Record summary
This 177-nucleotide RNA was probed chemically with DMS and 2A3. 2A3 adducts were read by reverse transcription with SuperScript II with manganese. The RNA was probed in 150 mM KOAc, 10 mM MgCl2 and 150 mM bicine (pH 8.5) at 24 C. For DMS the reverse transcriptase was MarathonRT. The DMS profile rests on 8,835 reads. Source: RMDB library OK1LIB, as collected in RNAgym. High DMS reactivity at an A or C suggests that its Watson-Crick edge is free.

RNA sequence: GGGAACGACUCGAGUAGAGUCGAAAAAAGGAUGAAGGUGUACGUGAAAAUGUAUCAGUCGAAAAAUUAAGUCGCUUAAGACCAGCUUUCAAAAAAGACGGGACAGUUACAGCAGGUAAUGCAUCAGACCUAAGGCAAGAUUCGUCUUGCCUUAGGUAAAAGAAACAACAACAACAAC
Reactivity to DMS in 0.01 (KOAc 150mM, MgCl2 10mM, bicine 150mM(pH8.5), 24C), signal-to-noise 4, nucleotides 027 to 126: a070a040g000g020a060u010g010a040a060g000g010u010g000u020a010c060g030u010g010a100a030a050a060u000g010u020a040u010c050a070g000u010c020g000a030a060a060a100a110u050u020a070a120g000u010c030g020c080u020u020a100a100g000a060c030c040a040g030c050u010u010u030c090a010a040a060a040a070a060g020a040c090g010g000g000a040c050a040g020u000u000a030c090a050g020c050a040g000g010u000a040a060u020g000c060a070u020c100a040g000
Reactivity to 2A3 in 0.01 (KOAc 150mM, MgCl2 10mM, bicine 150mM(pH8.5), 24C), signal-to-noise 3, nucleotides 027 to 126: a000a010g170g020a080u110g070a070a020g060g020u040g020u080a010c080g130u130g030a090a100a000a000u130g020u040a080u130c020a010g050u100c060g070a030a000a000a000a130u220u220a060a030g020u050c000g060c090u110u120a090a000g030a030c020c000a010g050c060u070u080u130c130a100a120a030a000a000a010g040a020c000g000g000g020a010c000a030g050u090u070a040c010a020g020c000a000g120g030u090a140a000u060g010c010a010u030c030a040g080